[RMDB]
RNA sequence: GGGAACGACUCGAGUAGAGUCGAAAAGAUAUGGAAUCGUUGAACUUGGAUUUAUCCUACUAUAAAUUCGGAAACGAAUUUACGAAUAGGAUUGUCAGUUCACUCGAUUCCUAAGUCAAAAGAUCCUAGGUGUCAGUUCGCUGACACCUAGGAUCAAGGAGACAGUAGUCUUCGGACUACUGUCUCCAAAAGAAACAACAACAACAAC
Reactivity to 2A3 in 0.01 (KOAc 150mM, MgCl2 10mM, bicine 150mM(pH8.5), 24C), signal-to-noise 1, nucleotides 027 to 156: g010a050u070a040u140g000g060a010a060u010c000g030u030u020g000a000a010c010u010u160g130g010a050u190u190u020a000u040c000c010u040a010c030u020a010u040a090a000a010u000u050c020g020g000a140a170a060c010g010a010a020u000u000u000a010c030g040a280a300u020a030g000g000a000u020u000g000u000c000a000g050u000u000c020a010c050u020c010g000a000u000u040c000c000u010a020a000g020u010c010a000a000a160a140g090a000u090c000c000u000a010g020g000u010g000u000c000a010g010u040u110c200g080c110u040g000a000c010a000c000c000u000a000g000g010a000u000c010a000a010